[RMDB]
Chemical mapping of a 177-nucleotide RNA with 2A3. High 2A3 reactivity points to a flexible backbone, as in loops and unpaired stretches. Source: RMDB library OK1LIB, as collected in RNAgym.
RNA sequence: GGGAACGACUCGAGUAGAGUCGAAAAUAAACGGGAUCGUGUACCACUGCCACUGUCGGUAUCCGUUCUCAAAAACAUGCUGGAUGGGGGCCUCCGCGGCCCUACAGCACCUGCGCUCCAUCAGCUCCUGCUACGUCCGUUUCGACGGACGUAGCAGAAAAGAAACAACAACAACAAC
Reactivity to 2A3 in 0.01 (KOAc 150mM, MgCl2 10mM, bicine 150mM(pH8.5), 24C), signal-to-noise 1, nucleotides 027 to 126: u030a050a050a010c050g010g050g040a040u000c000g000u000g030u000a030c000c030a050c000u110g140c060c030a110c060u090g000u010c110g000g010u010a050u010c020c000g000u000u010c020u000c070a080a030a030a000a000c030a100u090g000c010u020g130g010a070u170g090g070g000g010g000c000c050u020c020c260g040c050g000g000c000c000c000u000a010c010a000g030c040a020c010c030u050g050c030g000c130u000c020c020a110u050c000a010g010c010u020c000